[RMDB]
RNA sequence: GGGAACGACUCGAGUAGAGUCGAAAAGGGCCAGAUGCAGCAUAGAAAGCAAGGUAUGUGCUUCCAAAGAUAUCUCACCCCUGAAAGGAACCUUGAGCUCUCGAAACCACUCACUGGUAUGAGGAACAGUUAGAUUGCACUCCAGGUGGUGGUGUGAUGAAUUAUCAUCCUUCGGGAUGAUAAUUCAAAAAGAAACAACAACAACAAC
Reactivity to DMS in 0.01 (KOAc 150mM, MgCl2 10mM, bicine 150mM(pH8.5), 24C), signal-to-noise 2, nucleotides 027 to 156: g010g030g000c010c040a090g020a100u000g010c030a100g010c040a160u000a180g000a120a070a060g020c040a050a070g000g020u000a110u000g040u010g000c010u000u000c020c020a070a100a170g020a130u000a060u010c040u000c050a080c050c000c010c000u000g010a100a050a080g000g000a070a110c020c040u000u010g000a130g030c020u000c030u000c000g000a130a080a050c030c010a050c040u000c080a040c050u020g020g020u000a140u000g000a080g000g010a060a070c050a060g060u000u000a090g030a110u020u000g020c030a030c010u010c010c030a080g020g020u010g010g010u010g010g020u000g010u010g020a160
Reactivity to 2A3 in 0.01 (KOAc 150mM, MgCl2 10mM, bicine 150mM(pH8.5), 24C), signal-to-noise 2, nucleotides 027 to 156: g030g010g010c060c050a030g020a060u050g000c010a020g000c020a050u050a190g110a130a060a010g010c030a040a030g090g020u100a060u140g030u030g050c000u020u040c000c030a120a040a080g100a080u140a060u080c050u020c030a070c010c020c000c010u030g030a130a010a010g040g020a030a000c000c000u040u090g000a020g020c020u000c020u030c040g020a100a010a020c010c010a030c010u090c020a050c000u050g030g010u160a120u160g060a070g010g040a040a040c010a020g080u050u090a050g000a140u060u090g020c080a030c050u000c000c000a020g050g000u050g010g010u060g000g000u070g080u000g020a080
The data come from the RNA Mapping Database (RMDB), library OK3TST.
The record gives the reactivity of an RNA of 207 nucleotides to DMS and 2A3.
For 2A3, 991 sequencing reads were counted.